[RMDB]
RNA sequence: GGGAACGACUCGAGUAGAGUCGAAAAGCUCUGUAAUGGGAUGGGAUCCGAAGCCCCAUUGAGGGAUAAUACAGGCUCUCCCAUGCAACUCCUAUUCCAACACGUCCUCGUCGUACAGAGUGGUAACUAAGGUAUAGCUCCUUCGGGAGCUAUACAAGUAGAUUGCAUAGUUCGCUAUGCAAUCUACAAAAGAAACAACAACAACAAC
Reactivity to 2A3 in 0.01 (KOAc 150mM, MgCl2 10mM, bicine 150mM(pH8.5), 24C), signal-to-noise 4, nucleotides 027 to 156: g020c020u020c010u000g030u030a130a130u050g000g000g040a020u060g040g000g000a040u110c000c020g040a070a040g010c000c010c010c030a160u130u190g040a300g010g000g030a030u070a130a060u100a180c090a030g030g000c000u010c000u000c020c010c000a000u030g000c000a040a140c030u020c020c000u020a040u030u070c030c020a070a050c040a030c100g060u070c010c030u080c030g100u030c020g020u060a030c030a030g030a010g020u060g050g020u100a150a070c120u040a100a060g080g010u010a000u010a000g000c000u000c000c000u020u050c060g060g010g000a000g000c000u000a000u000a000c000a000a000
Reactivity to DMS in 0.01 (KOAc 150mM, MgCl2 10mM, bicine 150mM(pH8.5), 24C), signal-to-noise 3, nucleotides 027 to 156: g000c020u000c010u000g000u010a040a080u000g000g040g020a020u000g000g000g000a130u000c020c020g000a100a210g000c010c000c000c020a300u000u000g000a170g020g020g000a080u000a060a150u010a160c110a170g010g000c100u000c100u000c010c010c010a050u000g000c050a080a080c020u010c020c030u010a020u010u000c010c030a090a150c040a090c050g020u010c030c030u010c080g000u010c060g010u000a060c050a030g010a050g030u000g000g010u010a060a150c110u000a090a100g050g010u010a010u000a010g000c000u000c000c000u000u000c300g050g030g000a010g020c000u000a000u000a010c000a040a120
Overview: Structure probing data (2A3 and DMS) for a 207-nucleotide construct. For DMS the reverse transcriptase was MarathonRT. The RNA was probed in 150 mM KOAc, 10 mM MgCl2 and 150 mM bicine (pH 8.5) at 24 C. 2A3 adducts were read by reverse transcription with SuperScript II with manganese. The DMS profile rests on 5,198 reads.